[RMDB]
RNA sequence: GGGAACGACUCGAGUAGAGUCGAAAAGUUAGGUGAGGCUCCUAUGCAAACACAGGCCACUGCCCAAAAAUGUCCAAAGACGCCAAUGGGUAGAACAGGGAUUCUCGGAUUAAGGCUUUCCAUAAUGAAAACAAAGUAUGCUUCGGCAUACUUUGAACAAAGGUAGCAACUUCGGUUGCUACCUUUGAAAAGAAACAACAACAACAAC
Reactivity to DMS in 0.01 (KOAc 150mM, MgCl2 10mM, bicine 150mM(pH8.5), 24C), signal-to-noise 1, nucleotides 027 to 156: g050u000u000a080g020g040u000g050a080g000g030c040u000c040c000u010a180u020g000c060a090a080a070c060a110c050a010g000g030c010c040a100c010u000g020c020c000c000a000a090a080a100a060u000g040u000c010c060a080a050a190g010a100c020g070c030c010a030a190u000g010g000g020u000a020g000a050a090c030a240g010g010g030a140u000u010c020u000c060g020g050a130u000u000a040a170g030g030c080u000u000u000c020c000a140u000a090a070u020g000a090a130a110a170c010a010a010a010g000u000a000u000g000c030u000u020c300g040g030c000a010u000a010c000u030u000u020g000a030a120
Reactivity to 2A3 in 0.01 (KOAc 150mM, MgCl2 10mM, bicine 150mM(pH8.5), 24C), signal-to-noise 1, nucleotides 027 to 156: g030u070u030a030g000g050u060g040a030g030g000c020u070c030c010u060a050u110g090c060a030a080a100c000a030c000a070g170g000c040c010a030c010u010g010c010c020c040a020a050a000a000a000u030g020u000c000c000a210a090a120g030a010c010g020c020c000a030a080u010g050g000g000u040a030g000a030a000c050a090g000g090g030a040u030u020c010u010c040g080g000a130u080u090a040a030g040g000c000u000u020u070c040c030a060u170a140a050u200g080a090a110a030a040c010a020a000a000g010u000a000u000g000c000u010u030c170g030g000c000a000u000a000c000u010u000u000g000a030a000